[RMDB]
RNA sequence: GGGAACGACUCGAGUAGAGUCGAAAAAAGAUGGUGGCUAAAUCUCCAGGAACGGGGGUGAUGCCUCUUGGUUAUAGAAGGUUUUACUCCUAGAAAGGAAUAGCCGUGUCUGUGUAUGAAGCACUGAAAAACUAACAUCCUUCGGGAUGUUAGUUUUAAAAGAAACAACAACAACAAC
Reactivity to 2A3 in 0.01 (KOAc 150mM, MgCl2 10mM, bicine 150mM(pH8.5), 24C), signal-to-noise 3, nucleotides 027 to 126: a000a000g070a010u080g010g110u070g000g050c000u090a130a040a200u070c040u000c030c010a020g040g040a130a040c060g050g020g020g000g000u030g050a030u000g050c040c000u000c000u000u000g070g000u220u050a100u030a120g180a220a070g030g000u010u010u000u000a000c040u020c000c020u030a080g080a130a140a000g010g010a020a010u030a000g030c000c050g020u050g010u040c030u000g000u000g000u000a130u200g110a070a020g060c010a000c050u000g050a180
Reactivity to DMS in 0.01 (KOAc 150mM, MgCl2 10mM, bicine 150mM(pH8.5), 24C), signal-to-noise 7, nucleotides 027 to 126: a060a030g000a020u010g000g020u030g010g020c010u010a020a110a110u030c120u010c010c010a050g010g010a140a130c220g010g010g000g000g000u000g000a010u000g000c000c000u000c010u000u000g010g030u040u030a080u030a030g000a060a030g010g010u000u000u010u000a010c010u000c000c010u010a060g010a150a160a080g000g000a040a110u000a020g030c010c010g010u020g010u000c020u000g000u000g010u000a080u030g020a110a150g010c070a090c030u000g000a090